[RMDB]
RNA sequence: GGGAACGACUCGAGUAGAGUCGAAAAUUGCAAGAGUCACUCUUCGACACCGCUGUCGAUGUCGUGACAGACAUGCCGGCUGAGUGGAUCACGCCGCAUGCGUGGUCGCAGCUGGUGGUGAUGGCGGGCCCAUAUACCGGUUCGCCGGUAUAUGGGCAAAAGAAACAACAACAACAAC
Reactivity to 2A3 in 0.01 (KOAc 150mM, MgCl2 10mM, bicine 150mM(pH8.5), 24C), signal-to-noise 6, nucleotides 027 to 126: u210u230g040c060a060a010g030a020g070u110c030a030c100u060c030u110u040c030g040a040c010a020c050c040g010c050u040g000u030c010g030a040u020g010u050c060g040u050g150a110c030a020g010a000c010a010u060g020c020c000g010g000c000u010g020a060g070u180g200g020a020u010c000a000c020g010c030c040g220c150a080u300g000c000g000u010g000g010u000c000g000c000a000g000c000u020g010g000u020g070g050u210g010a060u030g020g010c000g000g030
Reactivity to DMS in 0.01 (KOAc 150mM, MgCl2 10mM, bicine 150mM(pH8.5), 24C), signal-to-noise 2, nucleotides 027 to 126: u000u000g000c100a090a110g000a130g010u010c020a090c080u020c040u000u000c030g050a090c140a160c050c030g020c150u000g030u020c000g070a050u000g000u010c030g000u030g010a100c090a090g010a050c020a040u040g000c000c020g000g020c000u000g000a010g010u030g020g030a060u000c040a000c010g010c000c300g040c270a080u040g040c000g010u000g000g000u000c000g000c000a010g000c010u010g010g000u000g020g010u010g010a030u000g000g000c000g010g010